[RMDB]
RNA sequence: GGGAACGACUCGAGUAGAGUCGAAAAGACAGCGACGUCGACAUCCUCGCGGUCGUCGCGCAGGGCGGCCGUGUGUGCGUGAACCUCGCGAUGGUGCGCGGCGGCCGGCAUCUCGGCGACAAGGCGAAGCCUCCUCAGGGUUCGCCCUGAGGAGGCUAAAAGAAACAACAACAACAAC
Reactivity to DMS in 0.01 (KOAc 150mM, MgCl2 10mM, bicine 150mM(pH8.5), 24C), signal-to-noise 4, nucleotides 027 to 126: g020a080c080a110g010c080g010a110c110g010u000c010g010a080c160a120u000c050c030u000c070g010c010g000g000u000c020g010u010c000g010c080g040c050a110g010g020g000c020g010g020c020c030g030u000g010u010g000u010g020c030g000u000g000a140a080c070c030u000c060g020c090g010a110u000g000g030u000g000c020g020c030g020g000c030g010g030c020c000g020g000c060a060u010c060u000c020g010g010c030g000a080c060a080a130g010g000c040g000a080
Reactivity to 2A3 in 0.01 (KOAc 150mM, MgCl2 10mM, bicine 150mM(pH8.5), 24C), signal-to-noise 2, nucleotides 027 to 126: g040a010c050a030g040c020g090a080c040g040u020c010g030a050c020a140u030c000c030u020c050g080c010g010g000u020c000g000u010c000g000c000g050c050a000g070g090g100c000g030g020c030c010g010u070g060u060g010u090g060c040g040u080g090a120a140c010c010u000c020g000c040g110a100u130g060g070u030g030c020g000c000g020g000c000g000g020c000c010g000g010c010a030u030c010u010c020g000g030c030g030a040c030a050a060g140g000c010g010a030